[RMDB]
RNA sequence: GGGAACGACUCGAGUAGAGUCGAAAAUCGGAGGACGAAGGAGUGGCAGGGCCUCCAGGUCCGCUAUUCGACCACAUGCCUUUUGGAGAUGAUCAUGGCCGGGCCGGGGAAGCGAAGAGCUUCCAAGGGACUGAUCUUGGUUCGCCAAGAUCAGUCCAAAAGAAACAACAACAACAAC
Reactivity to 2A3 in 0.01 (KOAc 150mM, MgCl2 10mM, bicine 150mM(pH8.5), 24C), signal-to-noise 2, nucleotides 027 to 126: u170c070g000g020a010g010g030a050c040g090a070a100g060g050a100g000u080g040g030c080a070g050g030g100c000c010u010c040c010a010g000g020u030c010c000g020c040u080a080u030u050c050g030a040c040c000a020c020a040u220g050c030c010u060u120u110u170g080g020a120g030a070u150g000a000u030c030a010u040g020g020c050c040g030g010g000c000c010g050g000g020g000a010a000g000c000g040a080a030g050a040g090c000u000u000c000c000a040a040g060
Reactivity to DMS in 0.01 (KOAc 150mM, MgCl2 10mM, bicine 150mM(pH8.5), 24C), signal-to-noise 1, nucleotides 027 to 126: u010c060g010g000a050g000g020a070c010g030a100a080g000g000a150g090u000g000g090c110a060g000g010g000c000c020u010c040c030a120g000g100u060c000c030g020c110u000a070u000u020c020g020a060c000c020a060c090a130u050g000c040c010u000u000u030u000g000g000a070g040a110u010g020a090u000c010a050u010g000g020c070c040g000g000g000c010c010g000g020g000g000a010a000g050c030g000a020a150g000a210g010c000u000u000c000c000a030a080g000